[RMDB]
Chemical mapping of a 177-nucleotide RNA with 2A3 and DMS. For 2A3, 4,223 sequencing reads were counted. For DMS the reverse transcriptase was MarathonRT.
RNA sequence: GGGAACGACUCGAGUAGAGUCGAAAAAUUUCAUCGAGGCCAACCCGCGUUUGCAAGUCGAGCACACCGUGACCGAGGAGUGGUGCGGCACCGACCUCGUCACGGCCCAGUUGCGCCUCGCGGCGGGGACAAUUCAACAGUUCGCUGUUGAAUUGUCAAAAGAAACAACAACAACAAC
Reactivity to 2A3 in 0.01 (KOAc 150mM, MgCl2 10mM, bicine 150mM(pH8.5), 24C), signal-to-noise 3, nucleotides 027 to 126: a000u060u080u100c040a040u070c050g000a010g040g000c020c020a010a000c020c050c010g010c020g030u100u130u120g050c060a110a080g030u120c030g080a020g020c030a000c010a010c030c000g010u000g000a020c080c120g010a010g000g000a140g060u180g020g030u090g050c150g170g010c020a000c010c010g090a070c010c000u000c000g010u010c000a010c000g020g020c010c000c000a010g000u000u050g050c070g010c000c040u010c010g000c020g040g010c020g020g000g060
Reactivity to DMS in 0.01 (KOAc 150mM, MgCl2 10mM, bicine 150mM(pH8.5), 24C), signal-to-noise 4, nucleotides 027 to 126: a150u000u010u000c040a130u010c030g020a040g010g010c010c030a040a110c020c060c050g000c030g020u000u000u010g040c040a110a110g020u000c030g000a060g000c020a080c140a300c010c020g000u000g000a020c100c080g040a020g010g000a120g010u010g010g000u000g010c180g010g010c050a050c020c020g000a160c010c010u010c010g020u000c000a000c010g000g010c040c070c090a130g010u000u000g010c090g000c030c000u010c010g010c110g000g000c050g000g010g010
About this RNA:
The DMS profile rests on 4,505 reads.